[RMDB]
RNA sequence: GGGAACGACUCGAGUAGAGUCGAAAAUGAUAAUGCAGCAGAAGAAAGUCUGUGGGUAAGGUAACGAAGAGCCUAACCAUAGCUAGCAUGAAUCUAGGCCUUCGACUAUCAAUUAUCGGAACGUAGAGUGGUUCGAGCAUUUCGAUGCUCGAGCCACAAAAGAAACAACAACAACAAC
Reactivity to 2A3 in 0.01 (KOAc 150mM, MgCl2 10mM, bicine 150mM(pH8.5), 24C), signal-to-noise 5, nucleotides 027 to 126: u160g030a000u030a070a030u100g080c070a030g010c020a010g070a110a010g110a130a220a050g190u050c020u000g040u030g000g050g040u120a210a070g020g020u020a090a000c010g000a010a000g030a050g010c000c000u000a010a010c000c010a020u050a040g100c070u070a020g030c100a060u060g010a050a050u120c080u000a000g000g000c000c000u000u020c020g080a150c030u010a010u100c040a120a070u040u030a030u060c010g070g050a070a080c090g060u110a040g030a020
Reactivity to DMS in 0.01 (KOAc 150mM, MgCl2 10mM, bicine 150mM(pH8.5), 24C), signal-to-noise 4, nucleotides 027 to 126: u050g010a060u010a030a040u010g000c060a240g000c040a020g000a090a120g000a150a110a140g000u020c000u010g050u010g000g020g010u010a070a050g000g010u020a010a090c040g000a020a010g010a160g010c000c020u000a040a050c070c020a020u000a070g010c060u010a090g000c080a010u020g000a120a150u030c090u000a010g000g000c000c000u000u010c010g010a130c140u010a030u010c040a080a030u000u000a020u010c010g010g030a080a090c120g020u040a080g020a190